[RMDB]
RNA sequence: GGGAACGACUCGAGUAGAGUCGAAAAACUGAGAUAUGGACUACGGAUGCUAUUAGUCUGCGAAUUCAUAUGACUUUGAACCUACGAAUAUCACGGCCCGAAGACCAUAAGCUUUAUUAGCGAACCAACAAGUUAGACUAUUCGUAGUCUAACUUGUAAAAGAAACAACAACAACAAC
Reactivity to 2A3 in 0.01 (KOAc 150mM, MgCl2 10mM, bicine 150mM(pH8.5), 24C), signal-to-noise 3, nucleotides 027 to 126: a000c060u080g020a030g000a030u030a030u070g010g010a010c010u020a020c080g060g000a060u110g040c010u010a080u100u050a070g020u030c030u020g020c060g040a020a050u030u030c020a000u040a050u170g080a090c050u070u070u110g020a040a030c000c000u020a050c040g070a050a020u100a030u160c030a020c070g040g020c000c000c000g000a010a000g010a020c030c000a020u000a030a010g000c000u010u000u000a010u000u000a000g000c000g000a000a000c000c000a000
Reactivity to DMS in 0.01 (KOAc 150mM, MgCl2 10mM, bicine 150mM(pH8.5), 24C), signal-to-noise 5, nucleotides 027 to 126: a130c090u000g010a070g010a120u000a020u000g010g010a100c040u000a100c050g010g000a130u000g020c180u000a130u010u010a060g010u000c020u000g010c050g010a070a080u000u010c020a040u000a030u010g010a060c070u000u000u000g010a080a110c080c000u000a070c060g000a050a010u000a090u000c050a060c070g000g000c030c000c020g000a060a030g000a110c040c030a030u010a000a010g000c010u000u000u000a010u000u000a010g000c000g000a010a010c010c020a020

Description: Structure probing data (2A3 and DMS) for a 177-nucleotide construct. For 2A3 the reverse transcriptase was SuperScript II with manganese. It was measured as part of the RMDB library OK2TRN. The DMS profile rests on 6,101 reads.